RNA sequence: GGGAACGACUCGAGUAGAGUCGAAAAGCAUUAUAUACUUCAUUUGGGCAUUUAGAUCCUAAUACUGUAGGGCUUAAAGGAGAGUAUACCGCUGCAGUUUUACAUAAAAAUCGCGAUAAACAUAUCGAAUAUUUAUCACCGAGCAUAGUUAAUGGUACUUGUAUUAGGACUUCGGUCCUAAUACAAGAAAAGAAACAACAACAACAAC
Reactivity to 2A3 in 0.01 (KOAc 150mM, MgCl2 10mM, bicine 150mM(pH8.5), 24C), signal-to-noise 2, nucleotides 027 to 156: g010c000a010u100u090a100u120a040u040a180c020u100u130c050a110u070u050u030g000g000g000c010a030u080u060u110a050g020a130u070c000c030u080a100a020u060a120c040u040g060u090a020g020g000g000c010u030u070a070a040a030g040g000a030g000a010g050u070a040u030a110c020c040g070c030u020g040c000a000g000u000u000u060u110a030c010a020u190a040a150a010a010a020u140c100g000c010g070a020u060a060a160a020c040a070u090a050u100c040g040a090a030u070a040u140u130u040a080u080c000a000c020c090g030a010g040c020a080u070a100g030u070u120a130a010u090g010g020u010a060
Reactivity to DMS in 0.01 (KOAc 150mM, MgCl2 10mM, bicine 150mM(pH8.5), 24C), signal-to-noise 2, nucleotides 027 to 156: g000c030a080u000u000a080u000a150u010a010c020u010u000c030a220u000u010u000g010g000g020c000a170u000u000u000a100g010a120u000c030c040u000a070a130u000a060c100u000g080u020a060g010g050g000c000u010u000a050a050a110g020g020a180g010a140g010u000a060u000a070c100c100g030c050u010g020c060a040g030u000u000u010u000a020c050a070u010a020a070a050a140a090u000c050g030c050g010a010u000a010a020a000c020a060u000a170u000c110g000a200a120u010a020u000u000u000a010u020c030a030c050c020g010a040g040c030a100u000a070g020u000u000a050a070u000g010g000u000a100
An RNA of 207 nucleotides, treated with 2A3 and DMS and read out base by base. In probing experiments dimethyl sulfate is read out at A N1 and C N3, which are open when not base-paired. Source: RMDB library OK3TST, as collected in RNAgym. As a SHAPE reagent, 2A3 marks flexible, mostly unpaired nucleotides at the ribose 2'-OH. Values are in units of 0.01, from 0 to 300, in steps of 10.